[RMDB]
RNA sequence: GGGAACGACUCGAGUAGAGUCGAAAAGAUCUGCGCCGAUCCGAAACGCUAGCAAACAGCCCGCAUCAAGUCGUCUCCUAACUUCGACGUGGUGAAAUACUGAGCUUAUGCGAGUAAGCCUGUUAGCAAUAGAUCAGAACGUUCGCGUUCUGAUCAAGUGGUUCAUUACCUUCGGGUAAUGAACCACAAAAGAAACAACAACAACAAC
Reactivity to 2A3 in 0.01 (KOAc 150mM, MgCl2 10mM, bicine 150mM(pH8.5), 24C), signal-to-noise 1, nucleotides 027 to 156: g040a050u060c040u060g070c040g000c000c060g080a060u040c030c070g070a040a010a010c030g060c090u040a000g000c000a090a070a200c030a090g030c040c000c000g000c000a040u010c060a070a010g020u040c000g020u010c030u010c040c060u150a080a050c030u120u070c060g000a010c030g000u080g020g010u080g070a030a030a000u280a100c090u030g010a010g020c000u000u060a000u010g050c000g010a130g040u000a020a020g010c020c030u050g020u110u030a010g000c010a080a210u070a160g000a010u000c000a000g000a000a000c000g000u010u000c110g020c000g150u000u020c000u000g010a000u000c000a000a000